[RMDB]
RNA sequence: GGGAACGACUCGAGUAGAGUCGAAAAGAUAUGGACUCAAGACAUAUGUUGCAUUGAGCAACAGCAAUUGGUCGGAAACGACCACGGUUGACAUGCUCCGUGCAACAUAUGUCUUGAGUCCUAAGUCCAAUCUAAAGCACUUCGGUGCUUUAGAUUGAAAAGAAACAACAACAACAAC
Reactivity to DMS in 0.01 (KOAc 150mM, MgCl2 10mM, bicine 150mM(pH8.5), 24C), signal-to-noise 4, nucleotides 027 to 126: g000a090u030a300u010g000g020a000c000u000c000a020a010g000a010c000a020u000a010u000g000u000u000g020c000a020u000u000g000a010g020c020a030a150c090a080g010c010a070a100u000u000g010g000u000c000g000g000a100a120a290c000g040a020c000c000a040c300g020g000u000u010g010a120c240a140u010g000c000u000c000c070g000u000g000c000a000a000c010a000u010a000u000g010u000c000u000u010g000a000g000u000c000c000u000a010a040g010u010c020